Source information: Structure probing data (DMS and 2A3) for a 177-nucleotide construct. The reactions ran in a buffer of 150 mM KOAc, 10 mM MgCl2 and 150 mM bicine (pH 8.5), at 24 C. The DMS profile rests on 2,703 reads. The data come from the RNA Mapping Database (RMDB), library RFM100. For 2A3 the reverse transcriptase was SuperScript II with manganese. For DMS the reverse transcriptase was MarathonRT.
RNA sequence: GGGAACGACUCGAGUAGAGUCGAAAAAGUACGUUACGACGUACACCUCUGUUAGGAAGGGUGUGGGGGAGAGGCUGUCUUGUGUCUGUAAAUAUGCAAAACUUAUCUUCCCCAAGGCAGAGGGAAAAAUUCUCCGCAAUUUCGAUUGCGGAGAAUUAAAAGAAACAACAACAACAAC
Reactivity to DMS in 0.01 (KOAc 150mM, MgCl2 10mM, bicine 150mM(pH8.5), 24C), signal-to-noise 1, nucleotides 027 to 126: a070g040u000a000c000g000u000u010a150c160g000a080c010g000u000a000c010a090c000c000u010c000u000g020u000u010a040g020g010a100a040g030g020g020u030g000u000g020g020g010g010g000a010g000a000g000g040c180u010g040u000c020u000u020g010u000g000u030c090u010g010u020a060a100a090u020a060u020g010c020a010a010a040a010c010u010u030a050u000c000u000u000c040c000c000c000a000a020g000g000c010a000g000a000g000g020g000a010a040a050
Reactivity to 2A3 in 0.01 (KOAc 150mM, MgCl2 10mM, bicine 150mM(pH8.5), 24C), signal-to-noise 4, nucleotides 027 to 126: a000g000u000a000c010g010u060u060a060c300g030a010c000g050u010a000c010a040c000c000u000c000u010g040u050u170a130g000g160a170a090g080g030g090u130g020u040g040g000g000g020g000a020g000a000g100g060c110u040g020u010c000u010u020g020u000g030u000c060u060g200u160a030a190a120u210a060u060g010c010a010a000a010a050c010u140u100a030u060c010u010u030c000c000c000c000a010a010g000g000c000a000g000a010g000g010g040a000a090a000